The record gives the reactivity of an RNA of 177 nucleotides to 2A3 and DMS.
It was measured as part of the RMDB library RFMREP.
The RNA was probed in 150 mM KOAc, 10 mM MgCl2 and 150 mM bicine (pH 8.5) at 24 C.
2A3 adducts were read by reverse transcription with SuperScript II with manganese.
[RMDB]
RNA sequence: GGGAACGACUCGAGUAGAGUCGAAAAUAAAGCGGGUUCGUAAAGCCUGGGAGUGCUGGGCCUCUGUGAGGCGCCCAAUCCGGCAUAGAACCGGUGGUUAUCGGCGCCCAGGGUGAGCCCGCCUUGGGCGCGCAUAAUGGUUCGCCAUUAUGCGCGCAAAAGAAACAACAACAACAAC
Reactivity to 2A3 in 0.01 (KOAc 150mM, MgCl2 10mM, bicine 150mM(pH8.5), 24C), signal-to-noise 1, nucleotides 027 to 126: u140a050a050a000g030c000g000g000g000u000u010c010g020u050a040a030a300g300c000c010u010g000g040g010a090g070u210g040c010u020g000g000g040c050c010u010c010u000g300u140g100a060g010g050c020g210c010c000c000a000a000u040c010c000g020g050c060a180u150a230g060a140a050c000c000g010g000u000g020g000u040u040a130u160c040g000g000c010g000c000c000c000a010g050g000g000u040g020a000g040c000c000c000g000c010c000u020u010g050g080
Reactivity to DMS in 0.01 (KOAc 150mM, MgCl2 10mM, bicine 150mM(pH8.5), 24C), signal-to-noise 1, nucleotides 027 to 126: u000a040a050a110g010c010g000g000g010u010u010c020g020u000a040a080a140g000c000c000u000g010g000g010a020g020u000g010c010u000g000g000g000c000c000u000c010u000g030u000g010a030g040g000c020g040c020c010c020a110a210u010c000c000g000g000c020a260u020a150g000a080a160c000c000g000g000u000g000g000u010u020a030u000c110g000g000c020g010c020c000c000a020g000g010g010u010g000a020g010c010c000c020g010c000c000u040u000g000g000